[RMDB]
RNA sequence: GGGAACGACUCGAGUAGAGUCGAAAAUAUAAAAGAGGUCACUGGUGUUACCUAAGGUGAGCUGUAAAUUACCAGGCAUUCCCGUGUGUGGGUGUAGGAGUCGGAAGUGAUGGGUGGAGGAAGUGAGCAGCAGUUUACCUUUCGAGGUAAACUGCUGAAAAGAAACAACAACAACAAC
Reactivity to 2A3 in 0.01 (KOAc 150mM, MgCl2 10mM, bicine 150mM(pH8.5), 24C), signal-to-noise 2, nucleotides 027 to 126: u290a000u090a000a120a050a020g100a010g000g000u100c090a000c030u050g020g010u020g060u110u210a040c010c070u100a050a050g110g050u070g020a010g050c030u030g040u100a060a120a060u120u030a040c000c030a000g060g030c010a040u140u050c050c000c000g010u000g030u050g000u000g000g030g000u020g080u040a040g010g050a000g020u070c040g040g020a080a130g020u070g080a000u090g040g010g000u120g000g000a000g000g020a090a000g050u070g020a010g060
Reactivity to DMS in 0.01 (KOAc 150mM, MgCl2 10mM, bicine 150mM(pH8.5), 24C), signal-to-noise 2, nucleotides 027 to 126: u060a100u030a050a070a080a090g000a090g010g000u000c050a080c020u000g000g000u020g030u000u020a080c070c010u030a140a080g050g000u000g020a060g010c050u020g000u010a010a040a080u010u020a110c010c030a080g010g010c110a120u000u000c030c010c020g000u020g000u020g000u010g000g000g000u010g000u000a060g000g000a040g000u010c040g000g000a080a070g020u020g000a070u000g000g000g040u000g000g000a130g010g020a040a060g020u000g000a090g000